[RMDB]
RNA sequence: GGGAACGACUCGAGUAGAGUCGAAAAGCGUACUACCGUGAUACGAAUAAGACCGAAGAACUGGGUAGUUAGUCCCAAAUAGGACUAAUAACCCAGGGAGGUCGCUGAACACGGUAUCGCAAAGUGAUGCACUGAAGUUCGCUUCAGUGCAUCACAACUUCAUUGCACUGUUCGCAGUGCAAUGAAGAAAAGAAACAACAACAACAAC
Reactivity to 2A3 in 0.01 (KOAc 150mM, MgCl2 10mM, bicine 150mM(pH8.5), 24C), signal-to-noise 3, nucleotides 027 to 156: g020c000g020u070a080c040u010a000c020c000g000u010g010a030u070a300c070g040a110a110u200a160a050g020a010c000c030g120a150a020g010a060a050c000u000g000g030g000u030a140g030u050u000a000g000u020c000c030c030a100a150a040u300a110g010g010a010c000u000a000a020u040a060a070c000c000c000a000g000g000g000a010g000g010u010c010g000c020u040g070a120a010c010a000c010g000g020u020a040u300c000g000c000a000a010a000g000u010g000a010u000g000c000a000c010u000g010a010a000g020u060u150c230g100c080u000u000c000a000g000u000g000c000a010u000c000a000c000a000a010
Reactivity to DMS in 0.01 (KOAc 150mM, MgCl2 10mM, bicine 150mM(pH8.5), 24C), signal-to-noise 1, nucleotides 027 to 156: g010c000g000u000a060c090u000a010c010c000g060u000g060a130u000a260c120g000a080a130u000a150a230g000a010c010c040g030a090a160g030a100a250c000u000g000g030g000u010a140g000u000u000a030g010u010c000c010c000a030a140a210u020a030g000g050a030c000u000a000a000u000a130a080c000c000c000a000g020g000g000a180g010g010u010c000g040c090u010g080a060a130c020a010c000g000g000u000a020u020c020g000c030a070a100a060g130u000g000a020u000g030c000a040c020u000g040a030a060g020u000u020c300g020c020u010u000c010a000g030u000g000c000a000u010c000a000c050a060a020
Overview:
Conditions: 150 mM KOAc, 10 mM MgCl2 and 150 mM bicine (pH 8.5), 24 C. Chemical mapping of a 207-nucleotide RNA with 2A3 and DMS. The 2A3 profile rests on 2,229 reads. It was measured as part of the RMDB library RNAMAK. For 2A3 the reverse transcriptase was SuperScript II with manganese. For DMS, 2,062 sequencing reads were counted.